Chemical mapping of a 177-nucleotide RNA with DMS and 2A3. The reactions ran in a buffer of 150 mM KOAc, 10 mM MgCl2 and 150 mM bicine (pH 8.5), at 24 C. DMS adducts were read by reverse transcription with MarathonRT. Values cover nucleotides 27 to 126.

[RMDB]
RNA sequence: GGGAACGACUCGAGUAGAGUCGAAAAAGAUAUUUUUCAACCAUGCUGACAACACCGCAUGAAUGGCCGUUGCAGGAAAUUGAGGGAUUAAUCAAGAUCCGAAACGCACUGGUACACCGUAAUGGCGAUCAGCGAGGAGGUUCGCCUCCUCGCUGAUAAAAGAAACAACAACAACAAC
Reactivity to DMS in 0.01 (KOAc 150mM, MgCl2 10mM, bicine 150mM(pH8.5), 24C), signal-to-noise 1, nucleotides 027 to 126: a050g000a140u080a000u060u000u000u000u000c070a030a290c140c050a120u010g020c000u000g000a080c170a020a070c080a210c040c040g000c060a080u000g080a070a070u000g010g050c010c120g030u000u000g030c080a020g000g010a030a110a230u000u000g000a070g000g040g050a110u030u010a020a010u000c030a030a060g010a130u000c000c000g000a030a040a090c140g050c010a070c030u000g000g000u060a140c090a020c010c050g000u000a000a000u040g000g020c070g010
Reactivity to 2A3 in 0.01 (KOAc 150mM, MgCl2 10mM, bicine 150mM(pH8.5), 24C), signal-to-noise 1, nucleotides 027 to 126: a000g170a010u050a060u010u140u000u070u000c000a000a000c090c000a110u160g020c000u040g000a020c050a210a030c000a100c180c040g000c000a070u070g000a040a170u070g030g010c060c070g000u000u000g010c130a120g020g020a010a100a000u100u000g000a000g100g040g050a060u090u290a000a080u100c070a000a070g050a120u000c000c000g020a000a000a030c150g000c000a000c000u000g000g000u110a040c000a050c050c000g220u150a040a030u000g020g000c000g060